Source: RMDB library TTRDEL, as collected in RNAgym. The record gives the reactivity of an RNA of 177 nucleotides to DMS. For DMS the reverse transcriptase was MarathonRT. The RNA was probed in 150 mM KOAc, 10 mM MgCl2 and 150 mM bicine (pH 8.5) at 24 C. The DMS profile rests on 685 reads.

RNA sequence: GGGAACGACUCGAGUAGAGUCGAAAAGAUAUGGACCGAUGGUGGAGCUAAGUCGGAAACGACCUAGCGUUGAAACCACGGUCCUAAGUCAAAGACGUAACAUACACUUCGGUGUAUGUUACGUCAACCACGAACGCAUGUUCGCAUGCGUUCGUGGAAAAGAAACAACAACAACAAC
Reactivity to DMS in 0.01 (KOAc 150mM, MgCl2 10mM, bicine 150mM(pH8.5), 24C), signal-to-noise 1, nucleotides 027 to 126: g000a010u000a300u000g000g030a000c010c000g020a170u000g000g000u000g010g000a080g000c000u000a000a010g010u000c000g010g000a090a120a270c000g050a030c010c010u000a030g020c000g020u010u000g090a150a300a010c000c000a010c010g020g010u000c000c000u000a000a080g000u000c040a180a040a170g000a020c000g030u000a000a000c000a010u000a020c000a000c000u000u010c220g010g000u000g000u000a020u000g000u000u000a000c000g020u000c090a030a100